[RMDB]
This 177-nucleotide RNA was probed chemically with DMS and 2A3.
The data come from the RNA Mapping Database (RMDB), library OK1LIB.
For 2A3, 21,588 sequencing reads were counted.
Conditions: 150 mM KOAc, 10 mM MgCl2 and 150 mM bicine (pH 8.5), 24 C.
RNA sequence: GGGAACGACUCGAGUAGAGUCGAAAAUAGAGAGAGACAGGCUCAGAUGGCGACAGAAACACAGCCAGAACGUGCGUUUGCAUUUCUGAUGAAUGCAGAAGUUAGCGAAAGACAGACUCAGAAGGUAUAAAUACCAUUAGUUCGCUAAUGGUAUUUAAAAAGAAACAACAACAACAAC
Reactivity to DMS in 0.01 (KOAc 150mM, MgCl2 10mM, bicine 150mM(pH8.5), 24C), signal-to-noise 9, nucleotides 027 to 126: u030a090g000a080g000a070g020a060g010a080c090a070g000g010c030u000c070a050g000a080u010g010g010c030g010a080c120a070g010a100a080a090c140a110c110a110g000c050c020a040g010a060a110c130g010u000g000c030g010u010u020u020g010c020a030u010u010u010c040u020g010a110u040g010a040a040u010g000c020a020g010a060a050g010u010u020a060g020c020g010a070a070a090g000a070c080a060g000a070c050u010c040a070g010a080a060g000g010u020a100
Reactivity to 2A3 in 0.01 (KOAc 150mM, MgCl2 10mM, bicine 150mM(pH8.5), 24C), signal-to-noise 9, nucleotides 027 to 126: u160a020g090a000g020a000g010a000g010a030c030a060g030g030c010u030c070a040g030a110u070g030g010c020g030a030c020a050g100a040a090a010c100a010c030a040g040c030c010a020g040a080a010c030g030u050g030c020g030u040u090u080g010c010a020u010u080u040c060u110g200a190u200g050a070a030u070g000c000a000g020a120a010g030u060u180a010g010c020g040a050a040a000g030a020c030a020g020a030c010u010c050a060g040a120a020g110g000u140a050